[RMDB]
RNA sequence: GGGAACGACUCGAGUAGAGUCGAAAAUGCUGAAAUGGUUAAAGACAUGUUGAUCUUGAAUAAGGGUGGAUUACCUGAUUAUAUAAUCGACCCGCAAUUGAGUCACGCUAUUUUAACGGAACGAGUGUGACAUUUUUCAAUUCGUUGAAAAAUGUCAAAAAGAAACAACAACAACAAC
Reactivity to 2A3 in 0.01 (KOAc 150mM, MgCl2 10mM, bicine 150mM(pH8.5), 24C), signal-to-noise 3, nucleotides 027 to 126: u160g000c010u020g060a050a060a170u260g040g000u060u060a030a040a010g070a050c080a080u160g030u060u060g050a020u060c030u010u030g010a000a000u060a030a020g020g010g010u050g040g010a030u020u010a050c010c000u060g040a190u250u190a180u050a030u020a200a000u010c010g080a000c010c000c000g080c050a010a010u030u040g000a000g000u000c010a000c030g010c030u020a110u090u050u010u010a050a020c020g000g050a040a010c020g000a010g050u060g010
Reactivity to DMS in 0.01 (KOAc 150mM, MgCl2 10mM, bicine 150mM(pH8.5), 24C), signal-to-noise 6, nucleotides 027 to 126: u000g020c030u000g010a060a070a080u010g010g000u000u000a050a060a060g010a090c200a080u010g020u000u000g010a050u010c020u000u000g000a020a060u000a100a290g000g010g030u000g010g010a030u000u000a010c180c150u000g000a100u010u010a100u010a210u000a030a000u000c010g000a020c010c010c010g010c220a060a060u000u000g000a050g000u000c010a030c070g000c080u000a070u010u000u000u000a020a040c030g010g010a080a100c190g000a070g020u000g010